[RMDB]
RNA sequence: GGGAACGACUCGAGUAGAGUCGAAAAAUUCCCAAUCUUCUCUAUUUCCUUCUCCUCAAACACAGCCUGGGAGUGUUUGAGAAGGGGAUUGAGGAGAUUGGGAAGAAAACCCAUUGUUCGCAAUGGGCGAUAGACCUAUGUUCGCAUAGGUCUAUCGAAAAGAAACAACAACAACAAC
Reactivity to DMS in 0.01 (KOAc 150mM, MgCl2 10mM, bicine 150mM(pH8.5), 24C), signal-to-noise 2, nucleotides 027 to 126: a120u000u000c000c000c000a000a000u010c000u000u000c000u000c000u000a040u000u010u010c010c000u000u000c040u010c040c220u000c030a010a000a010c000a010c000a100g020c050c070u020g000g000g020a110g010u000g010u000u000u000g000a010g000a020a100g000g000g020g000a010u000u000g010a010g010g010a000g000a010u000u000g010g000g000a000a010g000a090a050a080a230c000c000c000a010u000u000g000u000u000c200g020c040a010a010u000g020g000g020
Reactivity to 2A3 in 0.01 (KOAc 150mM, MgCl2 10mM, bicine 150mM(pH8.5), 24C), signal-to-noise 2, nucleotides 027 to 126: a000u010u010c000c000c000a000a010u010c010u010u000c000u000c000u020a030u040u040u070c000c000u090u180c010u060c040c030u040c030a010a000a000c010a000c010a050g090c020c050u100g040g070g020a110g040u000g010u000u000u010g010a010g000a000a000g000g000g010g000a000u010u020g000a010g000g000a000g000a000u000u000g020g010g000a000a020g010a010a070a010a020c000c000c000a000u010u010g050u060u080c170g010c070a000a000u010g000g010g010
The data come from the RNA Mapping Database (RMDB), library RFMREP. Chemical mapping of a 177-nucleotide RNA with DMS and 2A3. The DMS profile rests on 2,642 reads. DMS adducts were read by reverse transcription with MarathonRT.